[RMDB]
RNA sequence: GGGAACGACUCGAGUAGAGUCGAAAAGAUAUGGACCACUGGAGCUUUUGACGUAUAUCGGAAACGAUAUCACGAUAAGCUCCGUGGUCCUAAGUCAAAUCGUGCCGGAGUUCGCUCCGGCACGAAACUACUUCUAAAUGUUCGCAUUUAGAAGUAGAAAAGAAACAACAACAACAAC
Reactivity to DMS in 0.01 (KOAc 150mM, MgCl2 10mM, bicine 150mM(pH8.5), 24C), signal-to-noise 2, nucleotides 027 to 126: g010a050u000a260u000g000g010a010c000c010a020c020u020g050g010a010g000c000u000u000u000u000g020a240c080g010u000a020u010a010u010c010g000g000a080a050a160c000g000a020u000a010u000c120a040c010g000a100u000a020a020g020c000u000c000c010g020u000g000g020u000c000c000u000a010a040g010u000c030a090a120a120u010c010g020u000g000c000c000g000g000a050g020u000u000c240g010c000u000c020c000g020g000c000a000c000g000a010a020a170
Reactivity to 2A3 in 0.01 (KOAc 150mM, MgCl2 10mM, bicine 150mM(pH8.5), 24C), signal-to-noise 3, nucleotides 027 to 126: g020a010u060a020u080g010g010a010c010c030a050c230u300g020g000a010g010c020u150u300u290u300g110a040c030g020u010a000u000a010u010c000g000g030a040a040a000c010g000a000u010a000u050c140a010c030g090a110u090a270a050g000c000u000c000c000g000u010g000g010u000c000c000u000a010a000g000u010c020a000a010a120u040c000g000u000g070c000c000g000g000a030g010u150u250c300g060c120u000c000c000g020g000c000a000c000g010a010a010a000
The record gives the reactivity of an RNA of 177 nucleotides to DMS and 2A3. For DMS, 3,262 sequencing reads were counted. Reactivities are given for positions 27 through 126. Source: RMDB library TTRDEL, as collected in RNAgym. The 2A3 profile rests on 6,108 reads.